[RMDB]
RNA sequence: GGGAACGACUCGAGUAGAGUCGAAAAAUAGAUGCUUACCCUCUCACAAAGCAUGAAGAUAUAGAAUACCAGAAUGUAUUCUGGGUCUACUUACAGUAUAUAGAAAAACUGUAUAAAGACCUUACAGGAGCCUGCAAGUUCGCUUGCAGGAAAAGAAACAACAACAACAAC
Reactivity to 2A3 in 0.01 (KOAc 150mM, MgCl2 10mM, bicine 150mM(pH8.5), 24C), signal-to-noise 7, nucleotides 027 to 129: a000u130a010g090a000u010g010c000u010u070a080c010c040c000u050c010u040c020a060c030a050a070a000g020c010a000u070g030a100a020g090a050u140a020u090a160g030a020a010u010a040c010c070a070g090a270a050u180g060u010a050u000u010c000u010g010g010g000u000c000u030a070c060u030u010a000c000a000g020u010a060u040a010u080a140g270a030a100a020a000a020c000u000g000u000a010u010a030a040a000g000a000c000c000u010u030a040c050a050g020g070a030g030
Reactivity to DMS in 0.01 (KOAc 150mM, MgCl2 10mM, bicine 150mM(pH8.5), 24C), signal-to-noise 8, nucleotides 027 to 129: a080u050a070g030a060u000g000c000u010u020a010c040c000c030u040c110u000c110a090c110a060a020a020g030c000a000u030g030a110a100g040a080u060a060u030a030g020a030a030u010a040c020c220a080g060a190a100u040g040u040a020u020u000c010u070g010g000g010u010c000u020a100c190u030u010a020c000a020g000u030a040u030a300u020a090g080a110a080a070a070a040c000u040g020u030a020u000a070a230a040g020a020c020c010u000u000a050c110a090g000g000a070g020
Chemical mapping of a 170-nucleotide RNA with 2A3 and DMS.
For DMS, 24,761 sequencing reads were counted.
The RNA was probed in 150 mM KOAc, 10 mM MgCl2 and 150 mM bicine (pH 8.5) at 24 C.
Values are in units of 0.01, from 0 to 300, in steps of 10.